RNA sequence: GGGAACGACUCGAGUAGAGUCGAAAAGGGUCGCGGUUAAGGCCCCCGACCGCCGCGUCAACGUUCAUCAGCGAAGGGUGGCACACGGUCCCGAUCGCGUGUUCCAGAGACAGGCGCAGCACCUGGCCGCUAUUCAUAACUUCGGUUAUGAAUAGCGAAAAGAAACAACAACAACAAC
Reactivity to DMS in 0.01 (KOAc 150mM, MgCl2 10mM, bicine 150mM(pH8.5), 24C), signal-to-noise 5, nucleotides 027 to 126: g010g010g020u010c040g010c150g000g000u010u030a110a120g010g000c040c010c010c000c000g020a170c080c020g000c020c030g010c050g020u020c020a060a150c130g010u010u000c030a050u010c110a130g000c050g000a070a200g010g010g020u010g000g000c040a040c070a080c070g000g000u000c030c010c000g020a060u030c050g020c070g040u000g010u000u010c030c040a080g020a210g000a070c070a100g010g000c020g010c100a090g010c060a100c040c000u000g010g000c100
Reactivity to 2A3 in 0.01 (KOAc 150mM, MgCl2 10mM, bicine 150mM(pH8.5), 24C), signal-to-noise 9, nucleotides 027 to 126: g100g020g010u050c040g010c050g090g050u100u120a110a070g040g010c000c000c000c010c000g020a040c010c010g010c000c010g010c020g040u030c040a080a060c050g040u060u050c040a120u030c060a050g040c030g050a070a040g050g020g020u080g050g000c030a030c000a000c070g060g050u070c000c020c010g020a120u060c040g010c020g040u040g010u040u030c030c020a020g010a010g010a080c020a030g010g010c030g000c060a000g020c010a040c010c000u010g050g000c010
Structure probing data (DMS and 2A3) for a 177-nucleotide construct. It was measured as part of the RMDB library OK1LIB. 2A3 is a SHAPE reagent: it acylates the 2'-hydroxyl of flexible nucleotides of all four kinds.